[RMDB]
RNA sequence: GGGAACGACUCGAGUAGAGUCGAAAAAAGUCCUGGGGCGAUUGUCGGCUUAGUCGCUGUAUCAUUUCAACUGCUGUGCAGUUCUUCGCUAGUGACUAGACCGAACACUCGUAUCCCAGGCCUUUACAGCGGAUAAUUUCUUCGGAAAUUAUCCGCUAAAAGAAACAACAACAACAAC
Reactivity to 2A3 in 0.01 (KOAc 150mM, MgCl2 10mM, bicine 150mM(pH8.5), 24C), signal-to-noise 4, nucleotides 027 to 126: a000a000g010u040c000c000u010g000g000g000g000c010g010a010u000u020g000u000c000g000g020c010u010u030a010g010u000c000g010c010u030g060u120a160u180c110a150u040u170u150c040a020a000c000u020g020c040u220g260u300g180c010a030g010u060u070c040u100u110c130g020c120u110a000g000u000g000a000c000u000a000g010a040c000c010g020a090a010c000a000c000u000c010g000u020a070u050c020c010c010a020g000g020c000c000u030u010u000a110c060
An RNA of 177 nucleotides, treated with 2A3 and read out base by base.
2A3 adducts were read by reverse transcription with SuperScript II with manganese.